[RMDB]
Structure probing data (DMS and 2A3) for a 177-nucleotide construct.
RNA sequence: GGGAACGACUCGAGUAGAGUCGAAAACAUCUGACUUAUGUAGGUCAUAAGGGUCGGUGCGACCGUGUGUCGGCGAUACUGCUUCACGCGGAUCGUGGUGGGCUAGUGUCGGUGCCAGAACUGACAAUCAUGGGUAGCUCUUCGGGGCUACUCAUGAAAAAGAAACAACAACAACAAC
Reactivity to DMS in 0.01 (KOAc 150mM, MgCl2 10mM, bicine 150mM(pH8.5), 24C), signal-to-noise 9, nucleotides 027 to 126: c080a090u020c070u020g010a090c010u000u000a060u030g010u020a090g010g020u020c020a030u020a060a060g000g010g020u020c030g000g010u010g000c020g000a040c020c010g020u000g010u010g010u010c160g000g010c010g000a150u030a090c130u030g000c000u000u020c020a020c020g010c010g000g000a070u000c020g030u000g000g010u010g000g010g010c020u010a060g010u010g010u000c010g010g010u010g010c030c040a080g010a060a040c030u000g000a030c050a040a140
Reactivity to 2A3 in 0.01 (KOAc 150mM, MgCl2 10mM, bicine 150mM(pH8.5), 24C), signal-to-noise 9, nucleotides 027 to 126: c020a060u090c060u100g050a040c010u080u050a050u190g140u170a090g130g100u130c010a010u030a050a040g030g000g020u030c020g010g060u040g020c010g000a010c000c010g020u020g010u010g010u020c050g010g240c010g050a050u090a210c050u120g010c000u010u050c010a000c020g010c000g000g020a080u010c010g010u020g020g120u070g030g000g000c020u040a050g040u010g010u030c000g000g010u010g010c010c030a010g010a040a020c010u010g010a010c000a010a040
Conditions: 150 mM KOAc, 10 mM MgCl2 and 150 mM bicine (pH 8.5), 24 C.
DMS adducts were read by reverse transcription with MarathonRT.